RNA sequence: GGGAACGACUCGAGUAGAGUCGAAAACGUUGUCAUCGACAACACCCUAUGCAUUCAUGCUCUGUAAGGAUGCGCCGAAAGGUGAGCAAGCCCGAGUUGCCCAGACCUGAAAUGCAACACUUUAGAGGAAAUGGGAUAAGUUCGCUUAUCCCAUUUCAAAAGAAACAACAACAACAAC
Reactivity to 2A3 in 0.01 (KOAc 150mM, MgCl2 10mM, bicine 150mM(pH8.5), 24C), signal-to-noise 3, nucleotides 027 to 126: c080g000u000u010g020u010c110a280u170c290g020a010c000a000a000c000a060c010c010c000u000a030u110g000c000a010u000u010c030a050u190g000c000u000c000u010g020u020a000a030g000g010a020u010g000c000g000c000c000g050a060a030a010g040g000u030g010a010g000c000a000a020g010c020c020c000g100a080g050u040u040g010c020c010c010a040g040a100c020c010u030g030a050a040a060u100g000c030a040a040c010a050c100u140u160u170a120g030a070g150
Reactivity to DMS in 0.01 (KOAc 150mM, MgCl2 10mM, bicine 150mM(pH8.5), 24C), signal-to-noise 3, nucleotides 027 to 126: c270g000u000u000g020u010c010a170u010c230g010a010c000a010a020c000a210c020c000c000u010a070u000g010c010a010u000u000c000a140u010g000c010u000c010u000g000u010a270a130g010g010a020u000g010c020g020c020c000g000a070a120a130g000g020u000g010a050g020c020a210a160g000c020c040c020g000a050g010u020u000g000c020c050c040a110g010a060c050c070u000g000a040a080a040u000g000c050a050a060c100a080c120u000u010u000a120g020a250g000